[RMDB]
RNA sequence: GGGAACGACUCGAGUAGAGUCGAAAAUGAACCGGCCCAGGUCGGAAACGGAGCAGGUCAAAACUCCCGUGCUGAUCAGUAGUGGGAUCGCGCCUGUGAAUAGCCACUGCACUCCAGCCUGAGCAACCAUUUAGUACGUCUUCGGACGUACUAAAUGAAAAGAAACAACAACAACAAC
Reactivity to 2A3 in 0.01 (KOAc 150mM, MgCl2 10mM, bicine 150mM(pH8.5), 24C), signal-to-noise 3, nucleotides 027 to 126: u080g020a050a070c010c000g060g000c000c000c000a020g000g010u010c030g010g000a110a120a060c070g030g030a050g020c030a010g000g020u120c040a020a040a040a160c050u030c010c020c010g020u020g040c030u060g030a260u110c090a010g030u080a030g130u070g030g020g000a010u030c040g000c020g000c060c030u090g010u020g040a060a080u080a040g000c000c010a070c080u110g010c050a040c040u010c000c010a010g010c000c000u030g010a020g000c020a020a060c040
Reactivity to DMS in 0.01 (KOAc 150mM, MgCl2 10mM, bicine 150mM(pH8.5), 24C), signal-to-noise 3, nucleotides 027 to 126: u010g000a190a130c000c020g010g000c010c030c010a080g010g030u000c050g000g000a010a090a110c130g000g030a160g010c070a040g000g000u000c120a040a070a090a090c190u000c020c020c040g000u000g030c060u000g000a050u010c130a070g020u000a030g000u000g020g010g000a000u010c060g020c200g000c080c050u010g000u010g010a070a070u000a130g010c060c030a060c050u000g000c060a110c130u000c020c030a070g020c030c010u000g000a050g000c050a070a070c210